[RMDB]
RNA sequence: GGGAACGACUCGAGUAGAGUCGAAAAGAGGCGGUACGGCAUGCCAUCGGGGCCGACACGCUGGGAUACAUCUCGCUGCGGGGCAUGGUCGCGGCGUCCGAGCAGCCCACGUCGCUGCUGUGCACCGCCAAAGAUAGAUGUUCGCAUCUAUCUUUGGAAAAGAAACAACAACAACAAC
Reactivity to 2A3 in 0.01 (KOAc 150mM, MgCl2 10mM, bicine 150mM(pH8.5), 24C), signal-to-noise 9, nucleotides 027 to 126: g090a040g020g010c050g010g030u090a080c010g020g010c040a040u170g060c010c010a070u140c060g020g010g030g010c020c010g030a020c050a020c100g000c020u030g040g040g000a040u080a120c030a070u020c030u020c050g090c120u130g050c060g010g020g000g000c040a020u030g020g000u030c030g000c000g090g000c010g000u000c040c020g040a070g030c050a020g010c010c020c010a110c010g020u020c020g000c010u010g000c000u000g000u020g010c020a020c010c010g000
Reactivity to DMS in 0.01 (KOAc 150mM, MgCl2 10mM, bicine 150mM(pH8.5), 24C), signal-to-noise 9, nucleotides 027 to 126: g010a200g010g010c010g010g010u000a100c040g010g010c020a050u010g020c020c170a080u000c070g020g010g000g020c040c030g010a100c110a060c040g010c020u000g010g010g010a070u000a080c100a070u000c020u000c030g010c150u010g010c070g010g000g000g000c070a020u000g000g010u000c300g000c000g000g000c000g000u000c090c070g000a150g010c080a090g000c020c010c050a070c030g020u000c260g010c010u000g000c000u000g000u000g010c070a040c010c010g000
Conditions: 150 mM KOAc, 10 mM MgCl2 and 150 mM bicine (pH 8.5), 24 C. Structure probing data (2A3 and DMS) for a 177-nucleotide construct. For 2A3 the reverse transcriptase was SuperScript II with manganese. The DMS profile rests on 77,532 reads. For DMS the reverse transcriptase was MarathonRT. Reactivities are given for positions 27 through 126.